[RMDB]
RNA sequence: GGGAACGACUCGAGUAGAGUCGAAAAAAAGAUAUGGACCUUGUACUGAAUUUGGGAGCGUUGAAACUAAAUCGGAAACGAUUUAGUGGAGCUCCCAUUAGUCAGUACACUGGGUCCUAAGUCAAAAGUCACUAUACAAGUUCGCUUGUAUAGUGACAAAAGAAACAACAACAACAAC
Reactivity to DMS in 0.01 (KOAc 150mM, MgCl2 10mM, bicine 150mM(pH8.5), 24C), signal-to-noise 3, nucleotides 027 to 126: a100a090a110g010a030u000a300u000g000g010a000c000c000u020u000g030u000a000c000u000g020a030a100u010u000u000g020g010g000a020g030c000g010u010u010g010a190a090a010c000u000a000a000a000u000c000g000g000a110a060a160c000g010a010u000u000u000a000g010u000g000g000a150g000c000u000c010c000c000a010u000u000a030g000u000c000a000g000u000a000c000a020c300u010g010g000g010u000c000c000u000a000a140g000u010c030a120a080a110a180
Structure probing data (DMS) for a 177-nucleotide construct. For DMS the reverse transcriptase was MarathonRT. It was measured as part of the RMDB library TTRDES.